This 207-nucleotide RNA was probed chemically with DMS and 2A3. For DMS the reverse transcriptase was MarathonRT.

RNA sequence: GGGAACGACUCGAGUAGAGUCGAAAAGACAAUCCAGGGAACCGGAUGUCAUCACGUUGUUGCAGUACCAGAUGGCAUCUUAAAUCUGAUCUGCAAAUAAGCAUGUAGAAAGCUGAUGUGGGCUUUAAAAACGUGGUGCUGUUCGCAGCACCACGAACUAUACGCUACGGUUCGCCGUAGCGUAUAGAAAAGAAACAACAACAACAAC
Reactivity to DMS in 0.01 (KOAc 150mM, MgCl2 10mM, bicine 150mM(pH8.5), 24C), signal-to-noise 1, nucleotides 027 to 156: g000a110c050a070a090u000c040c020a040g010g000g000a170a150c010c080g000g010a020u000g020u000c000a110u010c020a110c190g020u000u000g040u020u010g000c010a110g050u010a060c070c030a140g010a040u010g010g030c070a140u010c080u010u010a040a110a090u000c040u010g070a120u000c020u040g000c010a010a060a080u020a080a130g000c070a070u000g000u010a160g010a030a040a090g000c030u000g010a080u020g090u020g020g010g010c050u000u010u000a020a060a040a050a130c020g030u000g040g040u000g000c000u000g000u000u010c290g040c010a020g020c050a050c050c000a000c000g000a030a070
Reactivity to 2A3 in 0.01 (KOAc 150mM, MgCl2 10mM, bicine 150mM(pH8.5), 24C), signal-to-noise 1, nucleotides 027 to 156: g050a000c030a000a120u050c020c040a050g090g050g080a070a060c080c030g030g000a020u000g000u020c030a020u020c010a020c130g100u110u090g080u040u020g030c010a010g000u040a100c020c040a040g000a000u000g050g000c040a030u030c020u040u190a040a070a060u030c020u000g020a030u010c020u000g000c000a000a030a080u130a060a050g050c030a050u100g020u060a070g150a090a080a000g000c020u030g020a110u110g080u100g000g030g000c000u060u100u150a030a100a010a000a000c010g000u000g000g000u000g050c000u020g040u040u050c240g000c070a000g000c000a000c000c000a000c000g000a000a000

2A3 adducts were read by reverse transcription with SuperScript II with manganese.